[RMDB]
RNA sequence: GGGAACGACUCGAGUAGAGUCGAAAAGAUAUGGAGGGAGCGAAUAGGAGCGCGGAUCGGAAACGAUCCGACCCGCUCCAAAAUUCGCUUUGAUCUCCUAAGUCAAAGCCACUCUUCGGAGUGGCAACAGCUAGAGACUGUUCGCAGUCUCUAGCUGAAAAGAAACAACAACAACAAC
Reactivity to DMS in 0.01 (KOAc 150mM, MgCl2 10mM, bicine 150mM(pH8.5), 24C), signal-to-noise 1, nucleotides 027 to 126: g000a040u000a290u000g010g000a000g000g000g010a000g010c010g020a000a020u000a300g000g000a020g010c050g000c100g000g000a000u020c000g000g000a140a070a250c080g000a060u000c000c000g050a050c240c240c030g000c000u000c000c000a020a020a150a110u000u000c000g030c000u030u000u010g000a070u000c000u000c000c000u020a000a170g000u000c020a050a130a130g010c010c000a000c000u000c000u020u000c150g030g000a000g040u000g050g000c020a010a040